RNA sequence: GGGAACGACUCGAGUAGAGUCGAAAAGAUAUGGAUCCCGAAGGGAGAGCCUCGGAAACGAGAAGCUCGAGGAUCUUCGGAUCCUAAGUCAAAGGUGAUUCGCUAUGUUCGCAUAGCGAAUCACCAACCAUGAACAUUAGUUCGCUAAUGUUCAUGGAAAAGAAACAACAACAACAAC
Reactivity to DMS in 0.01 (KOAc 150mM, MgCl2 10mM, bicine 150mM(pH8.5), 24C), signal-to-noise 5, nucleotides 027 to 126: g000a050u010a300u010g000g000a020u000c070c030c050g010a020a010g000g000g000a030g000a010g010c010c000u000c000g000g000a090a090a200c010g010a010g010a150a120g020c000u010c000g010a060g020g010a030u000c000u000u000c020g000g000a010u000c000c000u000a020a080g010u000c050a070a120a110g010g000u000g010a030u000u000c000g010c000u000a000u000g010u000u020c220g010c000a010u000a000g000c000g000a000a000u000c000a000c010c000a020a050
Reactivity to 2A3 in 0.01 (KOAc 150mM, MgCl2 10mM, bicine 150mM(pH8.5), 24C), signal-to-noise 3, nucleotides 027 to 126: g040a010u070a050u180g000g010a000u090c160c110c040g000a000a000g010g000g000a040g010a000g020c010c000u010c010g020g070a080a070a060c020g010a000g040a240a110g010c000u010c010g030a240g000g010a010u000c000u000u010c010g010g000a000u010c000c000u010a120a040g070u040c060a100a090a050g000g000u010g010a000u010u000c000g000c000u010a000u010g040u040u080c250g000c180a000u010a000g000c000g010a000a000u010c010a000c000c000a000a000
The record gives the reactivity of an RNA of 177 nucleotides to DMS and 2A3. The RNA was probed in 150 mM KOAc, 10 mM MgCl2 and 150 mM bicine (pH 8.5) at 24 C. It was measured as part of the RMDB library TTRDEL.